The data come from the RNA Mapping Database (RMDB), library TTRDES.
Chemical mapping of a 177-nucleotide RNA with 2A3 and DMS.
[RMDB]
RNA sequence: GGGAACGACUCGAGUAGAGUCGAAAAGAUAUGGAGAGUAUUUCUCAACAGCUAUUGGUCGGAAACGACCACGGUAGACAUGAGAGAUACUCUCCUAAGUCAAAAGGCAUACGUUCGCGUAUGCCAAGACAAAUGAGUAGUUCGCUACUCAUUUGUCAAAAGAAACAACAACAACAAC
Reactivity to 2A3 in 0.01 (KOAc 150mM, MgCl2 10mM, bicine 150mM(pH8.5), 24C), signal-to-noise 4, nucleotides 027 to 126: g000a000u040a010u080g000g000a020g010a000g020u020a010u010u060u010c020u030c110a300a200c100a090g020c000u020a020u160u110g000g000u010c010g000g040a030a030a020c000g040a010c050c020a000c060g100g010u030a020g020a130c200a300u300g010a010g000a000g000a010u000a000c000u000c000u000c010c000u010a000a000g000u010c000a010a030a070a170g000g000c000a000u010a010c000g050u040u130c300g000c020g150u000a000u000g010c000c000a000a000
Reactivity to DMS in 0.01 (KOAc 150mM, MgCl2 10mM, bicine 150mM(pH8.5), 24C), signal-to-noise 4, nucleotides 027 to 126: g010a030u000a190u010g000g010a010g000a030g010u000a000u000u000u000c000u000c000a080a070c200a250g000c010u000a020u010u000g010g010u000c010g020g000a050a040a060c000g000a020c020c000a010c300g000g000u000a020g000a050c100a260u010g010a010g000a030g000a000u010a010c000u000c000u000c000c000u000a000a030g000u010c010a050a090a150a130g000g000c000a010u000a000c000g010u000u010c250g000c020g030u000a000u010g000c000c000a020a040
2A3 adducts were read by reverse transcription with SuperScript II with manganese. The RNA was probed in 150 mM KOAc, 10 mM MgCl2 and 150 mM bicine (pH 8.5) at 24 C.